Structure probing data (DMS and 2A3) for a 177-nucleotide construct.

RNA sequence: GGGAACGACUCGAGUAGAGUCGAAAACAAAACGCUUUAGCCACUGCUUUAAAAGAUCCAGAGGCCAACAAACAGUUUGUCGCUGCUCCCCUUUUAAAGGCAUUGACAGCUUGGUAUGAAAAUAACCCCUUAGAGUAAGAUUCGUCUUACUCUAAGGAAAAGAAACAACAACAACAAC
Reactivity to DMS in 0.01 (KOAc 150mM, MgCl2 10mM, bicine 150mM(pH8.5), 24C), signal-to-noise 7, nucleotides 027 to 126: c060a090a090a110a130c150g000c050u010u010u010a110g020c020c020a060c050u000g000c020u010u000u010a030a030a070a070g010a060u010c220c030a040g010a050g010g010c020c060a020a030c070a110a090a140c180a110g000u000u010u000g020u000c020g010c040u000g010c050u000c060c120c050c030u000u000u000u000a020a030a040g020g010c010a020u000u010g000a050c040a050g010c030u000u000g020g020u000a070u010g000a070a050a070a090u010a090a080c080c040
Reactivity to 2A3 in 0.01 (KOAc 150mM, MgCl2 10mM, bicine 150mM(pH8.5), 24C), signal-to-noise 5, nucleotides 027 to 126: c010a000a090a020a030c070g030c040u160u140u190a010g010c000c000a030c030u030g030c010u050u040u050a030a060a000a030g010a020u030c030c010a010g010a010g020g010c020c030a010a010c010a020a270a040c040a040g010u040u040u030g020u020c010g000c020u010g010c040u080c020c000c000c000u000u040u010u060a060a090a000g070g000c010a030u010u050g040a050c020a020g000c010u020u020g020g000u090a080u160g090a070a040a040a060u130a040a060c000c010
Record summary:
2A3 is a SHAPE reagent: it acylates the 2'-hydroxyl of flexible nucleotides of all four kinds.